[RMDB]
RNA sequence: GGGAACGACUCGAGUAGAGUCGAAAAGUUCCCCUGAUGUCCAGUCCCUCCCCGCUCCUGGAGAAGGGAGACUCGGGAACGCCUAGCAUCUGAGGGACGAAGCCGCCCCCGGGCGCUCCCCUCGGAGGUUAUAGAUUAUCUUCGGAUAAUCUAUAACAAAAGAAACAACAACAACAAC
Reactivity to DMS in 0.01 (KOAc 150mM, MgCl2 10mM, bicine 150mM(pH8.5), 24C), signal-to-noise 3, nucleotides 027 to 126: g000u000u000c020c000c000c170u000g020a070u020g000u000c030c220a170g000u000c010c010c000u000c010c000c000c060g020c150u010c150c110u000g020g010a130g020a080a080g000g000g000a090g010a050c020u010c060g010g010g000a030a030c040g010c020c020u010a100g010c080a110u000c010u000g010a030g000g000g000a140c050g020a080a300g010c060c080g040c050c010c020c080c160g000g030g030c010g000c020u000c020c000c000c000u000c000g000g010a030g000
Reactivity to 2A3 in 0.01 (KOAc 150mM, MgCl2 10mM, bicine 150mM(pH8.5), 24C), signal-to-noise 2, nucleotides 027 to 126: g010u000u000c000c000c000c040u090g080a040u140g070u040c040c050a070g110u010c010c010c010u010c020c010c000c000g050c050u140c030c070u110g020g040a110g020a100a040g030g050g000a010g010a020c000u000c020g010g010g010a010a000c010g030c000c020u060a080g070c010a150u000c010u000g010a020g020g030g000a020c050g020a030a010g050c110c050g010c010c010c000c020c020g020g000g030c000g000c010u000c010c020c010c000u000c010g000g010a010g030